[RMDB]
RNA sequence: GGGAACGACUCGAGUAGAGUCGAAAAAGCACGGCUGCUACGCCAGCCGUGCAUGCGCGGAUAAAUCGACGGAUUGAAAAGCGGCGAUAUUGCUAACCGCCUGACGCGCAUUCUCAAUUAGCGACAAAAAAGGGCCUUUGGUUCGCCAAAGGCCCAACCCAAUAGUAAUGUUCGCAUUACUAUUGGGAAAAGAAACAACAACAACAAC
Reactivity to 2A3 in 0.01 (KOAc 150mM, MgCl2 10mM, bicine 150mM(pH8.5), 24C), signal-to-noise 1, nucleotides 027 to 156: a010g000c000a000c010g000g000c060u040g020c040u300a110c120g090c070c000a000g000c010c000g020u000g010c000a000u000g000c010g040c000g000g010a010u000a010a010a000u010c000g070a090c190g240g010a030u000u000g010a010a010a000a010g000c000g030g000c040g050a050u110a140u240u130g010c010u020a010a010c000c000g010c030c000u000g040a010c000g000c000g000c010a000u010u000c030u020c000a020a100u050u070a020g020c030g140a220c180a030a060a000a010a000a070g030g000g000c020c000u000u000u000g020g040u040u020c130g010c060c000a000a000a000g070g000c000c000c000a000a000

Conditions: 150 mM KOAc, 10 mM MgCl2 and 150 mM bicine (pH 8.5), 24 C. The record gives the reactivity of an RNA of 207 nucleotides to 2A3. For 2A3, 742 sequencing reads were counted. 2A3 adducts were read by reverse transcription with SuperScript II with manganese. Values cover nucleotides 27 to 156. The data come from the RNA Mapping Database (RMDB), library M2RFPK.